This 207-nucleotide RNA was probed chemically with DMS and 2A3.
RNA sequence: GGGAACGACUCGAGUAGAGUCGAAAAGUAUAAAAUCUGCAAGUAGUGCUAUUGUUGGAAUCACCGUACCUAUUUAGGUUUACGCUCCAAGAUCGGUGGAUAGCAGCCCUAUCAAUAUCCAGGAGAAAAAACCCAGGACUGUUCGCAGUCCUGGGAACAGUAUUAAUAUGUUCGCAUAUUAAUACUGAAAAGAAACAACAACAACAAC
Reactivity to DMS in 0.01 (KOAc 150mM, MgCl2 10mM, bicine 150mM(pH8.5), 24C), signal-to-noise 2, nucleotides 027 to 156: g010u000a180u010a060a090a100a090u000c030u010g010c060a090a150g020u000a080g000u000g000c030u000a040u000u010g020u010u010g000g000a100a100u000c010a080c060c010g050u020a060c010c000u000a210u000u010u020a030g000g000u000u010u000a090c070g030c020u000c040c020a050a090g010a070u000c070g010g040u000g000g000a070u000a060g020c030a120g020c090c100c010u000a160u010c040a060a120u000a080u010c030c030a130g010g010a130g010a010a060a070a090a080a100c000c030c020a040g020g000a060c010u000g020u000u000c220g030c020a010g030u000c010c000u000g020g000g020a000a000
Reactivity to 2A3 in 0.01 (KOAc 150mM, MgCl2 10mM, bicine 150mM(pH8.5), 24C), signal-to-noise 3, nucleotides 027 to 156: g030u020a040u090a260a150a040a060u070c040u100g040c060a060a080g030u080a010g050u060g070c010u020a030u110u080g080u050u050g030g040a070a070u090c010a020c050c000g030u040a040c000c010u070a150u210u180u230a040g000g000u010u050u070a030c040g010c010u010c020c020a060a010g030a130u090c060g010g000u030g020g030a020u020a020g000c010a020g020c010c000c000u060a050u080c020a060a040u020a030u210c050c040a010g030g020a020g000a030a040a010a030a040a040c020c010c000a000g010g000a000c000u010g030u050u100c150g000c060a000g000u000c000c010u000g000g000g000a000a000
The data come from the RNA Mapping Database (RMDB), library M2RFPK. DMS adducts were read by reverse transcription with MarathonRT.